Chemical mapping of a 177-nucleotide RNA with DMS and 2A3. For 2A3, 3,018 sequencing reads were counted. 2A3 adducts were read by reverse transcription with SuperScript II with manganese. The data come from the RNA Mapping Database (RMDB), library TTRDES.

[RMDB]
RNA sequence: GGGAACGACUCGAGUAGAGUCGAAAAGAUAUGGAUCCGCACAGCUAGCUGGGUGGUCGGAAACGACCAUUAGCUUGGACCUGUGGCGGAUCCUAAGUCAAAAGAUCAACAGUUCGCUGUUGAUCAACAUCCUUGGUCAGUUCGCUGACCAAGGAUGAAAAGAAACAACAACAACAAC
Reactivity to DMS in 0.01 (KOAc 150mM, MgCl2 10mM, bicine 150mM(pH8.5), 24C), signal-to-noise 2, nucleotides 027 to 126: g020a060u000a300u010g000g000a000u000c020c000g030c000a050c000a000g050c110u000a010g040c000u010g020g030g020u000g010g030u010c000g000g020a080a090a180c000g020a020c000c000a000u000u000a040g020c000u000u000g010g000a120c300c040u000g040u000g010g010c000g020g010a000u000c000c000u000a010a060g000u000c060a150a090a150a170g000a010u010c010a000a010c010a000g020u030u010c300g050c000u000g000u010u000g010a000u000c020a060a190
Reactivity to 2A3 in 0.01 (KOAc 150mM, MgCl2 10mM, bicine 150mM(pH8.5), 24C), signal-to-noise 1, nucleotides 027 to 126: g050a000u030a040u170g010g000a010u000c000c000g060c010a000c020a000g010c090u160a000g010c010u110g300g020g030u010g000g030u000c010g030g020a080a050a010c010g000a000c010c020a020u020u020a000g010c000u070u160g200g110a270c040c000u010g000u080g300g070c000g000g000a000u000c000c000u010a000a010g000u020c040a030a000a060a200g000a000u010c000a010a000c000a000g040u130u210c300g080c150u000g000u000u000g000a000u000c000a000a000